RNA sequence: GGGAACGACUCGAGUAGAGUCGAAAAACGACUUGGUAAUAUUCAAGCUCAACAGACCAAAUCACAGGUCUUCCUCUCUGGAUCCACUCCUCUGGGAUUGAUUUGUAUGCCGAUUUUCCCGCUGAACUGUACAGCCUAUAUUCGUAUAGGCUGUACAAAAAGAAACAACAACAACAAC
Reactivity to 2A3 in 0.01 (KOAc 150mM, MgCl2 10mM, bicine 150mM(pH8.5), 24C), signal-to-noise 8, nucleotides 027 to 126: a010c050g040a020c030u030u030g030g040u100a130a100u070a210u200u120c020a020a010g020c070u020c050a030a080c030a060g050a040c010c010a040a060a080u220c090a100c040a080g010g000u010c000u030u020c000c000u030c000u020c050u040g020g020a050u030c040c010a040c030u030c010c010u040c060u050g030g010g030a070u010u060g050a050u050u050u070g080u060a060u090g050c020c030g010a040u030u020u020u020c010c000c000g020c050u050g030a100a050c050
Reactivity to DMS in 0.01 (KOAc 150mM, MgCl2 10mM, bicine 150mM(pH8.5), 24C), signal-to-noise 5, nucleotides 027 to 126: a130c130g010a050c060u020u000g000g000u020a130a110u030a070u060u030c020a020a060g000c060u010c040a080a080c160a060g000a110c030c020a050a090a090u020c130a080c130a100g000g000u000c010u000u000c010c010u000c060u020c060u020g010g000a100u010c040c030a090c040u010c030c030u000c050u010g010g010g000a050u000u010g000a050u010u010u010g000u010a040u010g000c020c020g000a130u020u010u000u000c010c010c000g010c090u010g000a100a070c200
The record gives the reactivity of an RNA of 177 nucleotides to 2A3 and DMS.
The reactions ran in a buffer of 150 mM KOAc, 10 mM MgCl2 and 150 mM bicine (pH 8.5), at 24 C.